[RMDB]
Source: RMDB library OK3TST, as collected in RNAgym. An RNA of 207 nucleotides, treated with DMS and 2A3 and read out base by base. The RNA was probed in 150 mM KOAc, 10 mM MgCl2 and 150 mM bicine (pH 8.5) at 24 C. Values cover nucleotides 27 to 156. As a SHAPE reagent, 2A3 marks flexible, mostly unpaired nucleotides at the ribose 2'-OH. For 2A3, 2,207 sequencing reads were counted.
RNA sequence: GGGAACGACUCGAGUAGAGUCGAAAAUCAUGCGAUGAGAUCAUGCUAAACGAAACUGGAUUUACACUUUGAUCAAAAGGUAAAGCAAGGUUCGAUUGAUUUCAGACUUUUGUUAAAUAUUUCAUCAUCCAACUUUAGCAUGACAUCAUGCGAUGAGCUAGUUUGGGAGAUUCGUCUCCCAAACUAGAAAAGAAACAACAACAACAAC
Reactivity to DMS in 0.01 (KOAc 150mM, MgCl2 10mM, bicine 150mM(pH8.5), 24C), signal-to-noise 1, nucleotides 027 to 156: u000c010a040u000g010c000g040a080u000g010a070g020a080u010c000a010u000g000c050u000a040a070a300c010g000a080a030a120c120u010g000g000a050u010u000u000a040c060a110c030u000u000u010g000a160u010c250a070a020a040a040g000g020u010a000a070a070g000c020a140a040g020g050u000u000c000g000a090u010u000g010a220u000u000u010c030a070g000a070c040u010u000u000u010g000u000u000a050a040a120u010a110u000u000u010c060a100u000c120a050u010c020c020a050a170c090u000u010u010a020g000c010a000u000g020a040c050a040u010c020a060u010g010c030g000a050u000g010a040g020
Reactivity to 2A3 in 0.01 (KOAc 150mM, MgCl2 10mM, bicine 150mM(pH8.5), 24C), signal-to-noise 4, nucleotides 027 to 156: u010c010a010u150g120c040g050a010u010g010a010g000a090u010c000a000u000g000c010u010a000a000a040c120g110a150a060a030c080u020g020g010a040u050u060u130a050c300a120c050u060u030u090g090a160u220c100a040a050a000a020g040g010u020a070a010a020g000c010a000a010g030g030u040u060c040g040a030u010u120g060a070u030u070u100c040a030g030a050c010u140u250u130u110g050u060u080a090a130a080u200a150u070u210u140c090a080u040c010a020u000c020c020a010a050c050u010u010u000a000g000c000a000u000g000a000c010a070u010c000a000u060g060c020g030a020u020g020a000g030